[RMDB]
Structure probing data (DMS and 2A3) for a 207-nucleotide construct. It was measured as part of the RMDB library OK3TST. The RNA was probed in 150 mM KOAc, 10 mM MgCl2 and 150 mM bicine (pH 8.5) at 24 C. As a SHAPE reagent, 2A3 marks flexible, mostly unpaired nucleotides at the ribose 2'-OH. The 2A3 profile rests on 3,568 reads. For DMS, 7,938 sequencing reads were counted.

RNA sequence: GGGAACGACUCGAGUAGAGUCGAAAAGCGCACUCGUUUUGGAGGUCGCGCGGACUGCGCUACGAGGACCGCGAGGAGGAUCUGCGCCUCACUCUGGACGCCUACUUUGAUAGCGUGGCCGUGGAGUACGAACUGGCCCGUGAGGUGUACCGCGAAAUAGUAUUAUCGUUUUCGAACGAUAAUACUAAAAAGAAACAACAACAACAAC
Reactivity to DMS in 0.01 (KOAc 150mM, MgCl2 10mM, bicine 150mM(pH8.5), 24C), signal-to-noise 3, nucleotides 027 to 156: g020c020g020c030a080c030u010c030g010u000u000u000u010g040g000a140g020g010u000c040g040c020g030c000g020g030a060c040u000g020c010g000c030u000a080c040g030a110g010g010a100c080c040g040c130g030a180g000g000a080g030g020a070u000c090u000g030c020g010c010c010u000c020a100c040u010c060u000g030g010a160c060g000c050c040u000a090c090u000u000u000g010a140u000a060g010c030g010u000g030g010c000c080g000u010g030g000a120g030u000a110c050g080a080a110c040u000g010g050c000c030c050g000u010g000a080g010g020u000g020u000a050c020c040g010c040g000a100a080a210
Reactivity to 2A3 in 0.01 (KOAc 150mM, MgCl2 10mM, bicine 150mM(pH8.5), 24C), signal-to-noise 4, nucleotides 027 to 156: g010c020g000c010a030c040u040c060g070u020u030u120u230g140g000a060g020g020u070c050g000c000g000c000g010g010a040c020u040g010c000g000c010u030a020c030g030a010g010g030a040c020c030g020c050g020a030g000g020a010g030g000a040u050c050u130g050c070g030c030c000u000c000a170c000u070c040u050g050g020a030c040g060c030c010u050a090c060u120u110u230g150a250u110a010g010c010g000u020g000g000c000c010g010u030g020g050a080g050u090a060c090g000a110a040c020u030g040g000c010c020c030g010u040g010a040g000g010u040g020u040a070c030c010g050c020g010a050a060a030